[RMDB]
RNA sequence: GGGAACGACUCGAGUAGAGUCGAAAAAUGAGGUUCGCCUCAUCUGACCUUUGUGAGAACAGAGACCGACUGCUGAGGAGCGUCCCAUUGGGACGCUCUCCCCACCAGCACUCGGUCGACGAAGUUCUCACUCUGGUACAACUUCAGUUCGCUGAAGAUGAUUCGUCUUAUUCGUAAGACGAAUCAUAAAAGAAACAACAACAACAAC
Reactivity to DMS in 0.01 (KOAc 150mM, MgCl2 10mM, bicine 150mM(pH8.5), 24C), signal-to-noise 2, nucleotides 027 to 156: a040u010g000a000g000g010u000u010c280g000c000c000u000c030a040u000c030u000g010a060c010c000u000u010u010g010u010g030a100g000a030a000c010a080g010a300g000a020c010c000g040a060c020u000g060c020u020g000a300g000g010a050g000c040g000u010c000c010c010a270u000u000g080g030g050a030c000g000c010u010c010u000c110c070c020c020a300c210c010a000g040c020a020c040u000c000g020g000u010c010g000a080c100g000a140a130g020u000u000c000u010c000a000c010u000c030u000g000g030u010a090c100a140a240c010u000u000c000a010g010u010u030c270g000c000u000g010a060a030g000
Reactivity to 2A3 in 0.01 (KOAc 150mM, MgCl2 10mM, bicine 150mM(pH8.5), 24C), signal-to-noise 3, nucleotides 027 to 156: a000u040g000a010g000g030u130u210c260g160c040c000u000c000a050u050c060u080g090a020c000c000u020u030u000g000u000g000a010g000a000a010c020a020g040a010g000a070c000c000g010a000c010u010g010c000u000g010a030g010g010a000g010c000g010u000c020c000c060a200u200u300g010g000g000a000c000g000c010u010c030u040c010c010c000c000a040c000c000a000g000c000a000c010u000c000g000g010u000c000g010a000c010g000a050a010g000u000u010c000u010c000a000c000u020c000u010g000g010u070a210c050a120a060c040u000u000c010a030g100u100u130c150g010c090u020g000a000a000g040
Structure probing data (DMS and 2A3) for a 207-nucleotide construct. The reactions ran in a buffer of 150 mM KOAc, 10 mM MgCl2 and 150 mM bicine (pH 8.5), at 24 C. The data come from the RNA Mapping Database (RMDB), library RNAMAK. For 2A3 the reverse transcriptase was SuperScript II with manganese. The DMS profile rests on 2,528 reads.